The record gives the reactivity of an RNA of 177 nucleotides to DMS and 2A3. The RNA was probed in 150 mM KOAc, 10 mM MgCl2 and 150 mM bicine (pH 8.5) at 24 C. For 2A3, 1,827 sequencing reads were counted. The DMS profile rests on 1,400 reads.

[RMDB]
RNA sequence: GGGAACGACUCGAGUAGAGUCGAAAAGAUAUGGAAAGCGAUGAGAUACCUAGCGCAGAUAUCGGAAACGAUGUAGCUAUGUAUCGAGCUUUCCUAAGUCAAAGUUAAACAGUUCGCUGUUUAACAAGUCCGCUAUUGAGUUCGCUCAAUAGCGGACAAAAGAAACAACAACAACAAC
Reactivity to DMS in 0.01 (KOAc 150mM, MgCl2 10mM, bicine 150mM(pH8.5), 24C), signal-to-noise 2, nucleotides 027 to 126: g010a040u000a300u010g000g020a010a000a010g000c000g000a170u000g000a180g000a000u000a010c000c020u000a000g000c020g040c250a120g000a050u010a000u020c000g000g000a110a070a160c020g030a010u000g010u000a210g000c000u010a000u000g010u020a000u000c000g000a090g000c000u000u000u000c000c000u020a000a060g010u010c030a030a120a110g000u000u000a020a010a010c000a030g000u000u010c290g020c010u000g000u000u000u000a000a010c010a060a090
Reactivity to 2A3 in 0.01 (KOAc 150mM, MgCl2 10mM, bicine 150mM(pH8.5), 24C), signal-to-noise 1, nucleotides 027 to 126: g000a000u080a020u140g000g020a020a000a000g000c040g300a300u170g110a170g050a160u010a000c020c030u020a010g000c020g010c070a080g080a300u130a010u080c020g020g020a050a090a020c000g000a000u020g000u050a050g000c000u000a000u060g000u000a020u010c010g000a030g000c000u000u000u000c000c000u000a020a020g020u000c020a100a100a030g000u000u050a010a050a000c000a020g010u050u070c240g100c200u020g000u000u020u020a000a000c000a000a040